[RMDB]
Chemical mapping of a 207-nucleotide RNA with DMS and 2A3.
The DMS profile rests on 2,893 reads.
The 2A3 profile rests on 2,925 reads.
The reactions ran in a buffer of 150 mM KOAc, 10 mM MgCl2 and 150 mM bicine (pH 8.5), at 24 C.
Source: RMDB library OK3TST, as collected in RNAgym.

RNA sequence: GGGAACGACUCGAGUAGAGUCGAAAACUUAUUUAUUGUACAGACACAAAACGCUACUAUGUAUCUAAUGGAGUAUCAGUACGCUAUGUACGAUCUACACGCGUGUUAGAAAACUAUCAAAACAAAUGGGGUAAACUUAAUUUGCCUAAAGAUACCAGCUGUAAAAGUGAUUCGUCACUUUUACAGCAAAAGAAACAACAACAACAAC
Reactivity to DMS in 0.01 (KOAc 150mM, MgCl2 10mM, bicine 150mM(pH8.5), 24C), signal-to-noise 2, nucleotides 027 to 156: c030u010u000a030u010u000u000a040u000u010g000u030a170c050a130g010a230c080a140c060a060a090a110a100c040g030c060u020a140c040u010a150u000g030u000a050u000c020u000a110a080u010g020g000a060g030u010a050u000c090a140g030u000a010c030g010c080u010a100u000g010u000a030c010g000a190u000c040u000a060c030a030c110g010c020g060u010g010u000u000a070g000a050a080a070a110c090u000a140u000c090a070a070a100a040c020a060a050a090u000g000g000g020g040u020a040a060a060c070u020u010a000a300u000u000u000g020c020c030u020a020a080a070g000a120u000a050c030c040a160
Reactivity to 2A3 in 0.01 (KOAc 150mM, MgCl2 10mM, bicine 150mM(pH8.5), 24C), signal-to-noise 5, nucleotides 027 to 156: c010u080u080a090u220u150u020a130u080u150g040u110a080c070a150g110a020c040a030c030a160a100a200a040c040g060c020u100a060c020u050a050u190g070u030a050u000c030u060a100a090u090g080g010a060g010u020a030u100c040a030g000u020a020c020g010c090u070a070u230g000u000a000c050g020a060u000c020u040a020c040a020c060g040c020g000u020g030u020u030a050g040a030a060a000a000c030u070a060u250c050a030a060a020a140c050a040a090a100u120g050g000g010g000u030a040a030a030c020u040u140a090a070u150u080u060g000c000c000u050a100a050a000g010a000u010a030c020c050a030